[RMDB]
RNA sequence: GGGAACGACUCGAGUAGAGUCGAAAAGAUAUGGACCUACAAGGGAGAAGAGUCGGAAACGACACUUCAUCGAUCUUGACGGGUCCUAAGUCAAAGACGUAAUGUUCGUUCGCGAACAUUACGUCAACCUCGGUACUAUGUUCGCAUAGUACCGAGGAAAAGAAACAACAACAACAAC
Reactivity to 2A3 in 0.01 (KOAc 150mM, MgCl2 10mM, bicine 150mM(pH8.5), 24C), signal-to-noise 2, nucleotides 027 to 126: g020a000u060a040u160g000g010a020c000c000u000a030c000a000a000g080g020g000a070g020a020a000g010a030g010u000c000g000g020a050a020a040c010g020a000c020a040c040u000u040c000a250u300c060g070a070u040c010u010u150g100a300c220g010g010g000u000c000c010u030a120a010g060u000c040a110a060a090g010a010c000g010u000a000a010u020g000u010u000c010g020u010u100c300g000c030g160a010a000c000a000u000u010a000c020g010u000c000a000a000
Reactivity to DMS in 0.01 (KOAc 150mM, MgCl2 10mM, bicine 150mM(pH8.5), 24C), signal-to-noise 1, nucleotides 027 to 126: g020a030u000a300u010g020g000a000c000c000u000a130c040a010a000g020g010g000a060g010a020a010g000a020g110u000c010g000g000a070a060a150c010g000a000c000a010c000u000u000c020a270u010c180g020a080u000c000u000u020g000a090c100g020g000g030u000c000c000u010a000a080g010u010c040a080a100a060g000a000c020g000u010a000a010u000g010u000u000c000g000u010u020c290g040c000g000a000a020c000a010u000u020a000c010g000u000c020a000a050